[RMDB]
RNA sequence: GGGAACGACUCGAGUAGAGUCGAAAACGCGCAGCACGGCGCCGUCCGAGGGCAGCAGCGCAGUGGCGUCCAGGAGCGGCAGCUUCCUGGAUCAGCUAGCGCCCGGCAUCACCCGCCAGGACAGCACCUCGCAUGCGGAAUUCGUUCCGCAUGCGAGAAAAGAAACAACAACAACAAC
Reactivity to DMS in 0.01 (KOAc 150mM, MgCl2 10mM, bicine 150mM(pH8.5), 24C), signal-to-noise 1, nucleotides 027 to 126: c120g000c060g000c060a060g030c120a060c100g030g020c020g010c000c050g010u010c000c010g000a150g040g010g010c080a080g000c060a150g000c000g000c020a080g050u030g030g020c120g000u000c010c010a000g030g010a020g000c010g010g000c300a080g010c010u000u010c000c000u000g010g010a000u000c020a300g040c020u000a110g000c000g000c040c110c000g020g000c050a110u010c190a200c020c070c000g010c080c060a210g010g000a040c060a030g010c050a060c070